[RMDB]
RNA sequence: GGGAACGACUCGAGUAGAGUCGAAAAAGAAAGAAAUUGCUGGCCAAGAUGAGGACCACUUCAUUACAGUGGACGCUGUGGGUUGCUUCGAGGGUGAUGAAGAAGAGGAAGAGGAUGAUGAGGAUGAAUACCCUCAUUAAUUCGUUAAUGAGGGUAUAAAAGAAACAACAACAACAAC
Reactivity to 2A3 in 0.01 (KOAc 150mM, MgCl2 10mM, bicine 150mM(pH8.5), 24C), signal-to-noise 7, nucleotides 027 to 126: a000g110a020a020a000g080a010a070a030u150u110g020c020u050g030g050c020c020a060a040g070a110u110g030a050g050g060a050c000c010a050c010u090u080c040a140u040u210a060c070a040g040u050g030g030a020c040g000c040u040g020u040g110g000g010u050u060g010c030u010u030c030g030a060g000g010g040u060g010a050u040g020a010a030g030a030a010g020a020g030g020a010a030g010a000g040g000a000u040g000a020u030g010a020g060g010a020u050g020a020
Reactivity to DMS in 0.01 (KOAc 150mM, MgCl2 10mM, bicine 150mM(pH8.5), 24C), signal-to-noise 9, nucleotides 027 to 126: a070g010a080a070a070g010a040a070a060u020u010g010c040u010g010g010c020c050a080a100g010a080u010g010a100g010g010a160c040c050a050c030u010u010c130a070u020u020a070c130a030g010u000g010g010a130c100g010c030u010g000u020g000g000g010u000u010g000c060u010u000c060g000a100g000g000g010u010g000a050u010g000a050a060g010a060a050g000a080g000g010a050a040g000a060g000g000a050u010g000a070u010g010a070g000g010a080u020g010a110
Background:
Structure probing data (2A3 and DMS) for a 177-nucleotide construct. It was measured as part of the RMDB library OK1LIB. The RNA was probed in 150 mM KOAc, 10 mM MgCl2 and 150 mM bicine (pH 8.5) at 24 C. High DMS reactivity at an A or C suggests that its Watson-Crick edge is free. 2A3 adducts were read by reverse transcription with SuperScript II with manganese.